An RNA of 177 nucleotides, treated with 2A3 and read out base by base. The reactions ran in a buffer of 150 mM KOAc, 10 mM MgCl2 and 150 mM bicine (pH 8.5), at 24 C. For 2A3, 531 sequencing reads were counted. Reactivities are given for positions 27 through 126. It was measured as part of the RMDB library OK1LIB. For 2A3 the reverse transcriptase was SuperScript II with manganese.
[RMDB]
RNA sequence: GGGAACGACUCGAGUAGAGUCGAAAAGCCUCGAGCGCCUUGAACUUGCCGUUAGCGCAGGCAACACCCCCAAUCGCCUUCGGGUGAAGGCUCCCGAGUUCCAACUUACGAAGGAAUUCGCGGAUGCCCCCAGCGGCAUGUUCGCAUGCCGCUGGGGAAAAGAAACAACAACAACAAC
Reactivity to 2A3 in 0.01 (KOAc 150mM, MgCl2 10mM, bicine 150mM(pH8.5), 24C), signal-to-noise 1, nucleotides 027 to 126: g000c000c010u030c030g190a040g030c000g060c000c050u130u130g070a110a100c050u110u160g000c010c040g060u040u060a030g040c020g000c040a010g000g000c000a010a010c070a080c100c070c000c000c060a030a180u150c000g060c000c050u060u000c050g140g000g020u100g110a000a070g060g030c000u000c010c000c000g000a000g000u000u000c000c000a000a000c080u160u200a030c030g070a000a010g000g020a000a000u000u000c000g000c240g030g000a030u070g000c000